[RMDB]
RNA sequence: GGGAACGACUCGAGUAGAGUCGAAAAAAGGAACAGGUUGAUUGGCACCAUUCAAAACGUUAACCAGUCCACCAGCCAAAUGCUUUUCUUGUUCAGUGAACAGAGUGUGUGCUGUGCCUGUUUGACCCCACUAUUACCCGUUCGCGGGUAAUAGUGGAAAAGAAACAACAACAACAAC
Reactivity to 2A3 in 0.01 (KOAc 150mM, MgCl2 10mM, bicine 150mM(pH8.5), 24C), signal-to-noise 7, nucleotides 027 to 126: a000a000g180g010a020a000c020a010g000g050u100u120g160a130u120u140g070g020c000a000c010c010a020u040u020c040a040a040a060a050c080g040u060u070a040a060c020c010a010g020u020c030c030a070c030c030a060g030c020c030a050a090a080u160g010c030u080u080u040u050c030u060u060g030u050u050c070a100g030u040g140a050a040c050a080g010a020g010u040g000u020g010u020g030c010u000g020u030g020c000c000u010g010u000u020u010g040a040c000c000
Reactivity to DMS in 0.01 (KOAc 150mM, MgCl2 10mM, bicine 150mM(pH8.5), 24C), signal-to-noise 4, nucleotides 027 to 126: a070a070g000g000a020a010c000a010g000g000u010u010g020a050u040u030g000g000c060a020c010c020a040u030u010c090a100a020a110a120c210g010u010u000a090a110c060c040a100g010u020c040c100a060c110c020a020g020c060c070a040a100a050u030g000c060u000u010u020u010c030u010u010g010u000u000c030a140g020u040g010a040a040c040a120g010a020g000u010g000u030g010u020g020c000u000g010u000g000c010c000u000g000u000u000u010g000a130c040c010